This 177-nucleotide RNA was probed chemically with 2A3 and DMS. Source: RMDB library OK1LIB, as collected in RNAgym. In probing experiments dimethyl sulfate is read out at A N1 and C N3, which are open when not base-paired. The RNA was probed in 150 mM KOAc, 10 mM MgCl2 and 150 mM bicine (pH 8.5) at 24 C.
[RMDB]
RNA sequence: GGGAACGACUCGAGUAGAGUCGAAAAUCGUCAGGAAGAUGUUUUUCAGUCGAUGGACAGAGAGCAGUGUUCAAGGUUGCUUUAGCUGUCUGUGCACUUUCGGGUGCGAUGUCUAAAGCGGGUGAUGUCGGGAUUAAAUCUUCGGAUUUAAUCCCGAAAAAGAAACAACAACAACAAC
Reactivity to 2A3 in 0.01 (KOAc 150mM, MgCl2 10mM, bicine 150mM(pH8.5), 24C), signal-to-noise 5, nucleotides 027 to 126: u100c040g040u050c040a050g080g030a050a060g050a150u100g080u050u140u040u010u040c050a060g040u010c010g070a120u060g040g010a000c080a060g040a010g020a000g040c060a030g030u060g090u170u110c080a080a060g080g100u140u080g030c000u000u050u040a000g030c010u010g010u060c020u050g130u120g010c000a010c000u010u100u130c200g120g000g000u000g000c000g000a020u020g010u010c020u060a000a030a040g000c000g010g040g060u100g020a080u120g020
Reactivity to DMS in 0.01 (KOAc 150mM, MgCl2 10mM, bicine 150mM(pH8.5), 24C), signal-to-noise 2, nucleotides 027 to 126: u000c010g010u010c060a110g000g010a050a050g000a110u020g000u040u020u010u020u030c010a060g010u000c030g000a120u020g010g010a020c030a080g000a070g000a030g000c050a060g020u020g000u000u010c090a130a050g000g010u000u030g000c010u000u010u000a010g030c000u010g000u010c020u030g000u050g030c010a010c020u000u010u060c110g000g000g020u000g000c010g000a020u010g020u010c010u000a020a020a020g010c000g000g000g000u020g020a070u000g000